[RMDB]
RNA sequence: GGGAACGACUCGAGUAGAGUCGAAAAUGCCAAGAUGCUGUUUUGUUUUCCAUUAGCAGCAUGUACGACAUGAUUAAUGCCAAGUACUUGGGCAAGUUAAUCUUUUUGGAUUUUGGCCAAACAAUUAUCAUCAGAUGAAAUUCGUUUCAUCUGAUGAAAAAGAAACAACAACAACAAC
Reactivity to 2A3 in 0.01 (KOAc 150mM, MgCl2 10mM, bicine 150mM(pH8.5), 24C), signal-to-noise 7, nucleotides 027 to 126: u110g000c000c000a010a010g050a030u020g000c010u000g020u040u040u110u060g130u050u120u090u000c050c030a050u070u080a010g000c000a000g000c020a010u030g020u040a060c070g020a010c030a070u060g010a020u030u040a020a010u030g000c000c000a040a030g100u100a190c130u090u130g070g000g000c040a040a020g020u000u020a000a000u010c000u050u060u020u030u070g060g020a070u110u050u040u100g030g000c020c010a030a070a030c040a030a110u180u110a070
Reactivity to DMS in 0.01 (KOAc 150mM, MgCl2 10mM, bicine 150mM(pH8.5), 24C), signal-to-noise 9, nucleotides 027 to 126: u010g010c010c010a050a080g010a030u000g010c000u000g010u000u000u000u010g010u010u000u000u000c090c020a120u010u000a100g000c010a010g000c000a020u000g020u000a090c040g010a020c070a040u000g000a040u000u000a050a050u000g000c000c000a050a090g010u010a070c230u000u000g010g010g010c040a070a100g010u000u000a020a010u000c010u000u000u000u000u000g010g000a130u000u000u000u000g010g010c000c300a050a070a090c180a060a100u010u000a130